[RMDB]
RNA sequence: GGGAACGACUCGAGUAGAGUCGAAAAGAUAUGGAUUCCCAGUAGACAUGUCGUUCGGAAACGAAUCGACAACAGCUACGGGAAUCCUAAGUCAAAAGCUCCGCUUGUGUUCGCACAAGCGGAGCAACGUACUUAGUCAGUUCGCUGACUAAGUACGAAAAGAAACAACAACAACAAC
Reactivity to DMS in 0.01 (KOAc 150mM, MgCl2 10mM, bicine 150mM(pH8.5), 24C), signal-to-noise 3, nucleotides 027 to 126: g000a040u000a200u000g000g000a000u000u000c000c000c010a170g020u000a000g000a200c060a140u000g010u000c000g020u000u000c010g010g020a030a040a090c000g030a010a000u010c050g010a000c010a010a060c300a100g000c000u000a000c000g000g000g000a010a010u000c000c000u010a000a080g010u010c020a080a080a130a140g000c000u000c000c010g010c010u000u000g040u000g010u000u020c220g010c020a010c000a000a000g000c000g010g000a000g010c020a010a010
Reactivity to 2A3 in 0.01 (KOAc 150mM, MgCl2 10mM, bicine 150mM(pH8.5), 24C), signal-to-noise 2, nucleotides 027 to 126: g010a000u020a020u080g000g000a010u010u000c010c000c060a020g000u000a000g030a180c060a070u020g010u010c010g020u020u000c000g000g000a010a030a010c000g020a000a050u300c090g050a000c010a020a030c090a040g090c000u000a000c000g010g020g000a010a000u000c000c000u000a030a000g020u000c020a080a070a060a160g000c010u000c010c010g020c010u010u020g000u020g050u090u120c300g050c120a000c000a000a000g000c000g000g000a000g000c000a000a000